[RMDB]
Source: RMDB library OK1LIB, as collected in RNAgym. This 177-nucleotide RNA was probed chemically with DMS and 2A3. The 2A3 profile rests on 4,039 reads. The reactions ran in a buffer of 150 mM KOAc, 10 mM MgCl2 and 150 mM bicine (pH 8.5), at 24 C.
RNA sequence: GGGAACGACUCGAGUAGAGUCGAAAAUCGUCCGCGGUGCCGGAUCGGUGAUUAUCUGCAAUCCGAAUAACCCACUGGGUACGGCGUUCACCGAAGCCGAGCUACGUGCGAUUGUGGAUAUCGCGGCAAAUUGGUGACUGUUCGCAGUCACCAAUUUAAAAGAAACAACAACAACAAC
Reactivity to DMS in 0.01 (KOAc 150mM, MgCl2 10mM, bicine 150mM(pH8.5), 24C), signal-to-noise 4, nucleotides 027 to 126: u020c070g020u030c010c010g010c080g020g000u030g050c090c020g010g000a090u020c030g010g030u000g010a070u040u010a040u010c020u000g000c050a040a040u000c020c030g010a090a100u060a110a070c030c050c020a120c110u050g000g040g010u060a170c030g000g010c070g000u010u010c030a070c100c030g030a060a110g000c000c000g000a300g010c050u020a030c120g020u000g020c080g000a070u010u000g020u000g000g000a060u000a020u000c000g020c010g000g000c140
Reactivity to 2A3 in 0.01 (KOAc 150mM, MgCl2 10mM, bicine 150mM(pH8.5), 24C), signal-to-noise 6, nucleotides 027 to 126: u090c020g120u020c000c010g020c000g020g020u070g040c040c010g050g080a080u070c040g000g010u020g050a180u110u120a050u080c030u030g020c020a020a020u020c020c040g130a090a090u120a150a110c070c010c050a290c230u260g030g000g010u050a040c020g010g000c010g020u010u030c070a070c070c030g010a100a020g010c000c000g020a050g060c050u090a080c050g070u110g050c090g030a040u000u020g030u060g020g020a020u040a020u040c020g000c000g000g000c010